Structure probing data (2A3 and DMS) for a 177-nucleotide construct. DMS adducts were read by reverse transcription with MarathonRT.
RNA sequence: GGGAACGACUCGAGUAGAGUCGAAAAUCAGGUUCACCGAAUACUGCGCGUCUCUAUACGAACGACUGCCGAGAGGUAGACGGCUUUGUAAAAAUCAUGAGGCCAUCGGUUUACAGUAGCUCUUUCUCCUAUUUACAGGGUUCGCCCUGUAAAUAGGAAAAGAAACAACAACAACAAC
Reactivity to 2A3 in 0.01 (KOAc 150mM, MgCl2 10mM, bicine 150mM(pH8.5), 24C), signal-to-noise 8, nucleotides 027 to 126: u090c010a040g060g050u060u040c030a020c050c000g000a050a060u140a180c080u170g060c060g010c050g100u030c020u000c010u020a100u020a110c040g030a060a020c010g050a050c010u010g000c000c000g090a090g010a030g040g020u020a020g020a040c020g050g010c110u040u060u080g030u080a070a070a040a030a040u180c090a090u130g000a020g010g020c010c000a040u030c010g010g020u030u040u050a030c040a050g050u080a020g060c040u020c000u010u010u010c120u010
Reactivity to DMS in 0.01 (KOAc 150mM, MgCl2 10mM, bicine 150mM(pH8.5), 24C), signal-to-noise 1, nucleotides 027 to 126: u010c060a140g030g020u010u000c060a010c020c060g020a050a060u010a100c120u010g000c150g010c110g000u000c020u000c020u000a190u000a060c010g050a010a080c000g050a090c010u000g000c020c020g000a110g000a230g000g020u040a000g000a030c000g000g010c060u000u010u000g000u000a000a060a130a210a100u080c250a050u030g020a000g000g000c000c010a120u020c010g000g070u000u030u000a040c000a100g030u000a020g010c080u000c000u000u020u000c060u010
Overview: The RNA was probed in 150 mM KOAc, 10 mM MgCl2 and 150 mM bicine (pH 8.5) at 24 C.